[RMDB]
RNA sequence: GGGAACGACUCGAGUAGAGUCGAAAAGGGGUCCCAGCGAUAAGAACCCAGUGGAGCGAAGAACAUAGGCUGAAGCCUCCACGGCCUAUGGGAGCUCCACGGUUCUUUUGACGCUGGGACGGAGGCACCCAAAUGGUCACCGUUCGCGGUGACCAAAGGACUAAACAAUCUUCGGAUUGUUUAGUCCAAAAGAAACAACAACAACAAC
Reactivity to 2A3 in 0.01 (KOAc 150mM, MgCl2 10mM, bicine 150mM(pH8.5), 24C), signal-to-noise 1, nucleotides 027 to 156: g000g000g100g000u000c000c000c000a010g000c000g020a040u180a300a040g000a000a000c030c080c220a080g040u000g020g010a000g000c000g100a300a010g000a010a040c000a000u000a000g000g000c000u030g060a110a010g000c000c020u030c000c000a010c020g000g010c000c000u020a000u000g000g000g000a000g000c000u000c010c000a000c000g000g000u000u000c000u000u020u060u020g080a040c000g000c000u000g010g010g000a020c000g000g000a000g050g000c000a020c000c010c000a010a100a150u030g000g000u020c000a000c000c020g040u070u090c300g000c000g070g010u000g000a000c000c000a000a000a000